[RMDB]
RNA sequence: GGGAACGACUCGAGUAGAGUCGAAAAAUAACCUCCACCGACUCUGUGGAACCGCGUUCGGCAACAUACCGUCAACGUGUCAUUGGCUUGUGUGUCAUUGAGAUCCCCGGCCAGGCGCAUUAACCGACUAGGGUUUGGUAUUCGUACCAAACCCUAGAAAAGAAACAACAACAACAAC
Reactivity to 2A3 in 0.01 (KOAc 150mM, MgCl2 10mM, bicine 150mM(pH8.5), 24C), signal-to-noise 5, nucleotides 027 to 126: a000u110a040a040c000c010u020c010c010a030c030c060g100a080c040u010c030u090g020u030g070g020a020a030c040c040g020c000g040u070u050c040g030g000c040a080a030c020a140u130a050c010c030g030u050c040a020a010c060g040u030g060u040c060a100u020u080g020g020c000u080u090g020u030g040u040g020u150c020a100u040u070g030a020g010a090u060c000c000c000c000g010g000c000c000a010g010g000c000g000c020a010u040u080a060a040c050c010g040a030
Reactivity to DMS in 0.01 (KOAc 150mM, MgCl2 10mM, bicine 150mM(pH8.5), 24C), signal-to-noise 3, nucleotides 027 to 126: a070u030a050a140c080c010u000c030c050a070c040c050g010a080c080u000c080u020g010u020g000g000a100a080c130c070g040c050g000u000u010c100g000g010c030a120a060c170a110u090a110c090c090g010u050c060a030a060c050g020u000g010u020c040a070u010u000g000g000c070u010u010g050u000g020u020g000u000c040a110u020u010g020a050g010a110u000c040c010c010c040g000g000c030c020a060g000g020c060g010c040a050u010u000a110a090c070c010g010a210
The data come from the RNA Mapping Database (RMDB), libraries RFM100 and RFMREP. This 177-nucleotide RNA was probed chemically with 2A3 and DMS. For 2A3 the reverse transcriptase was SuperScript II with manganese. For DMS the reverse transcriptase was MarathonRT. High DMS reactivity at an A or C suggests that its Watson-Crick edge is free. Values cover nucleotides 27 to 126.